[RMDB]
Structure probing data (DMS and 2A3) for a 177-nucleotide construct. Reactivities are given for positions 27 through 126. The reactions ran in a buffer of 150 mM KOAc, 10 mM MgCl2 and 150 mM bicine (pH 8.5), at 24 C. For 2A3, 9,254 sequencing reads were counted. The DMS profile rests on 8,280 reads. The data come from the RNA Mapping Database (RMDB), library OK2TRN.

RNA sequence: GGGAACGACUCGAGUAGAGUCGAAAAUUGGCGUGUCGUAACUUGUCGUUUCAUGCCAGAGGGGUAUAGCGUUCAGGGCAUGACAGAGCAAUCAAACGAAACGACAGAACUUGUCGAAGCUGACCGAAGACUAUUGUUUGUUCGCAAACAAUAGUCUAAAAGAAACAACAACAACAAC
Reactivity to DMS in 0.01 (KOAc 150mM, MgCl2 10mM, bicine 150mM(pH8.5), 24C), signal-to-noise 7, nucleotides 027 to 126: u010u000g020g000c020g030u010g010u000c010g020u000a090a170c180u000u000g010u010c030g010u010u000u000c020a070u000g020c020c010a090g000a090g000g000g010g020u000a070u000a100g010c090g010u000u010c050a150g010g000g010c050a040u000g010a040c160a090g000a120g010c080a040a050u000c110a070a110a080c100g000a030a040a100c010g010a030c010a020g000a100a070c200u010u000g010u000c030g000a080a140g010c050u000g010a130c050c040g000a100
Reactivity to 2A3 in 0.01 (KOAc 150mM, MgCl2 10mM, bicine 150mM(pH8.5), 24C), signal-to-noise 6, nucleotides 027 to 126: u070u080g030g020c030g000u070g020u040c020g010u020a050a070c050u030u030g020u030c020g070u020u060u060c020a010u030g000c000c010a030g060a050g040g100g010g030u200a140u130a220g160c070g030u040u040c050a030g060g000g020c010a010u030g010a020c030a050g100a020g010c020a010a050u060c040a110a070a060c040g030a040a020a010c010g000a000c010a010g020a120a070c110u080u070g020u030c010g010a060a010g010c040u040g030a040c010c020g020a030